[RMDB]
Source: RMDB library OK2TRN, as collected in RNAgym.
Chemical mapping of a 177-nucleotide RNA with DMS.
RNA sequence: GGGAACGACUCGAGUAGAGUCGAAAAAGACCACCAGCUAAGGUCCCAAAAUAUAUGUUAAGUGGAAAAGGAUGUGGGGUUGCACAGACAACUAGGAUGUUAGCUUAGAAGCAGCUAUUCAUUCAAAUAACCACCCCUUAUUCGUAAGGGGUGGUUAAAAAGAAACAACAACAACAAC
Reactivity to DMS in 0.01 (KOAc 150mM, MgCl2 10mM, bicine 150mM(pH8.5), 24C), signal-to-noise 1, nucleotides 027 to 126: a080g040a090c020c010a090c040c080a060g030c080u010a140a120g000g000u000c000c000c050a110a100a110a120u010a100u020a080u020g010u000u000a060a090g030u000g000g000a010a030a080a040g000g000a100u000g010u020g000g000g030g020u000u010g020c030a060c100a100g000a060c080a010a030c040u010a070g010g000a020u000g000u000u000a100g000c000u000u000a080g030a050a090g010c300a030g010c010u010a030u000u010c020a030u000u020c030a140a050a150